[RMDB]
The record gives the reactivity of an RNA of 177 nucleotides to DMS and 2A3.
The DMS profile rests on 4,924 reads.
For 2A3 the reverse transcriptase was SuperScript II with manganese.
RNA sequence: GGGAACGACUCGAGUAGAGUCGAAAAGAUAUGGAGCCUGAACUACGAUCGGGAGGCUCUCGGAAACGAGAGCUACCCACCCACGAUCGCAGGCUCCUAAGUCAAAAGCAUUCCUUCGGGAAUGCAAGAGUAUGUAACUGUUCGCAGUUACAUACUCAAAAGAAACAACAACAACAAC
Reactivity to DMS in 0.01 (KOAc 150mM, MgCl2 10mM, bicine 150mM(pH8.5), 24C), signal-to-noise 5, nucleotides 027 to 126: g000a030u010a170u010g000g000a000g020c000c000u000g000a080a070c160u020a300c030g020a010u000c000g000g010g010a300g040g000c000u000c000u000c010g030g000a030a020a060c000g010a010g010a000g010c010u000a030c030c020c050a160c240c100c100a100c180g000a000u000c000g000c010a010g000g000c010u000c000c000u000a000a050g010u000c010a060a040a100a110g000c000a010u000u000c000c000u000u020c170g030g010g000a020a000u000g000c000a020a010
Reactivity to 2A3 in 0.01 (KOAc 150mM, MgCl2 10mM, bicine 150mM(pH8.5), 24C), signal-to-noise 4, nucleotides 027 to 126: g010a000u030a010u070g000g000a000g000c010c010u020g030a110a080c090u190a060c300g010a010u020c050g030g010g020a030g050g000c000u000c000u000c000g010g010a020a020a000c010g000a000g000a000g010c010u020a050c010c000c000a090c020c080c060a280c300g000a000u010c010g010c030a000g000g000c000u000c000c010u000a000a000g000u000c000a000a050a070a090g000c000a000u000u000c010c000u020u060c290g120g000g000a000a000u000g000c000a000a000